[RMDB]
RNA sequence: GGGAACGACUCGAGUAGAGUCGAAAACAAUACGCUGUGUGUGAUUGAGUAGCUCUUCAGGUGCAAGAGAGGUUUCCAGCGCCACGGCUGCGUUUAAGUAAUCGGGUUGAUCUUGCGGCCCCAGCGGCCCCGCAUCAUAGUUCGCUAUGAUGCGGGGAAAAGAAACAACAACAACAAC
Reactivity to DMS in 0.01 (KOAc 150mM, MgCl2 10mM, bicine 150mM(pH8.5), 24C), signal-to-noise 2, nucleotides 027 to 126: c010a070a090u020a160c160g010c000u000g030u000g000u010g030u000g010a140u020u010g000a080g030u000a030g010c000u010c020u000u000c060a200g000g020u010g000c130a050a080g000a010g000a020g010g010u000u010u000c010c020a040g020c030g000c000c010a030c060g000g000c020u000g000c070g020u010u000u000a050a160g000u000a110a100u000c040g010g010g020u000u010g000a050u000c040u000u000g020c110g010g000c010c020c090c080a090g000c110g010g000
Reactivity to 2A3 in 0.01 (KOAc 150mM, MgCl2 10mM, bicine 150mM(pH8.5), 24C), signal-to-noise 1, nucleotides 027 to 126: c010a000a020u210a150c080g010c020u030g000u030g060u020g010u020g100a300u090u040g010a020g090u060a040g050c010u000c010u110u090c010a090g280g050u100g100c080a030a060g000a000g000a010g110g000u000u110u060c000c030a030g000c000g000c020c020a000c010g000g020c030u040g000c020g010u040u030u110a090a030g030u070a050a100u070c050g020g010g000u000u060g020a040u060c030u110u160g070c040g020g070c000c000c000c000a040g030c000g090g000